The record gives the reactivity of an RNA of 207 nucleotides to DMS and 2A3. For DMS, 4,040 sequencing reads were counted. It was measured as part of the RMDB library OK3TST.
[RMDB]
RNA sequence: GGGAACGACUCGAGUAGAGUCGAAAAGGCAUCAAGCAGCGGCUGCUGGGCGGCGUGCUGGCGCUGGCCGACUCGGAGGCGGACGUGCCCGUGACGUACGGCGAGUUCGUGAUCUCGGGGCUGAACUUGGUGACGGCGCUAACGAUGGGCAAGGCGCAACUCCUUUUGUGUUCGCACAAAAGGAGUUAAAAGAAACAACAACAACAAC
Reactivity to DMS in 0.01 (KOAc 150mM, MgCl2 10mM, bicine 150mM(pH8.5), 24C), signal-to-noise 1, nucleotides 027 to 156: g000g040c000a090u000c040a060a050g000c030a120g050c020g030g000c010u000g000c010u030g010g050g020c020g000g000c090g050u020g070c090u010g050g010c040g000c050u010g020g000c040c010g010a070c010u000c030g000g000a130g000g010c030g010g000a050c030g050u000g000c010c000c020g030u000g010a160c180g010u000a080c010g020g030c000g000a080g030u000u000c030g040u000g010a090u000c010u000c020g030g020g010g000c050u010g000a090a080c040u010u020g020g020u000g010a070c020g000g000c000g000c020u010a050a160c050g020a080u010g000g010g050c050a130a240g020g040c040g030c050
Reactivity to 2A3 in 0.01 (KOAc 150mM, MgCl2 10mM, bicine 150mM(pH8.5), 24C), signal-to-noise 3, nucleotides 027 to 156: g060g000c020a070u050c100a140a070g030c060a050g180c030g120g010c080u140g040c020u120g050g060g030c000g030g000c020g010u060g020c060u060g030g020c040g000c030u050g060g000c010c000g090a080c010u020c030g090g000a040g040g010c010g010g040a040c050g050u120g040c030c030c000g020u030g060a100c100g080u300a010c000g000g010c040g030a100g020u090u060c020g010u010g100a220u050c070u110c020g000g000g010g020c060u050g030a040a080c000u050u060g000g010u010g040a040c040g040g010c010g000c020u040a080a010c040g070a100u130g030g000g010c030a070a060g020g000c000g000c020

For DMS the reverse transcriptase was MarathonRT.